The data come from the RNA Mapping Database (RMDB), library OK1LIB.
The record gives the reactivity of an RNA of 177 nucleotides to 2A3 and DMS.
[RMDB]
RNA sequence: GGGAACGACUCGAGUAGAGUCGAAAAGUAAACUUGAUGAAAGCAAACAUUUAACUGAGAUUAAUAUGCCAGGCUCACAUGAUAGUGGCUCAUUCACUUUAACUGAUCCGGUAAAAUCGGUUUGGGCAAAACCGGGUCUUUUCGAAGACCCGGUUUUAAAAGAAACAACAACAACAAC
Reactivity to 2A3 in 0.01 (KOAc 150mM, MgCl2 10mM, bicine 150mM(pH8.5), 24C), signal-to-noise 1, nucleotides 027 to 126: g070u040a020a020a140c060u050u140g000a130u110g060a220a000a100g110c040a050a130a020c000a060u100u150u040a120a060c090u030g010a060g040a300u090u140a070a000u070a040u190g010c020c000a010g000g000c020u010c000a000c000a000u200g010a020u000a000g010u000g170g000c020u000c110a040u200u080c040a030c060u120u190u110a220a040c080u020g020a060u000c000c030g090g000u110a060a040a070a200u140c080g020g000u020u000u060g020g000g000c000
Reactivity to DMS in 0.01 (KOAc 150mM, MgCl2 10mM, bicine 150mM(pH8.5), 24C), signal-to-noise 1, nucleotides 027 to 126: g000u010a040a140a060c040u000u010g010a130u000g020a150a050a100g000c020a080a210a070c100a050u000u000u000a120a120c040u000g010a060g010a130u020u000a080a000u030a030u010g010c030c000a140g010g000c030u040c020a030c030a070u000g030a000u010a010g010u000g020g030c090u000c100a050u000u020c060a010c030u010u020u000a030a060c100u000g030a060u080c000c000g010g040u000a060a020a250a040u090c050g000g000u000u000u000g010g000g020c140
For 2A3 the reverse transcriptase was SuperScript II with manganese. The reactions ran in a buffer of 150 mM KOAc, 10 mM MgCl2 and 150 mM bicine (pH 8.5), at 24 C.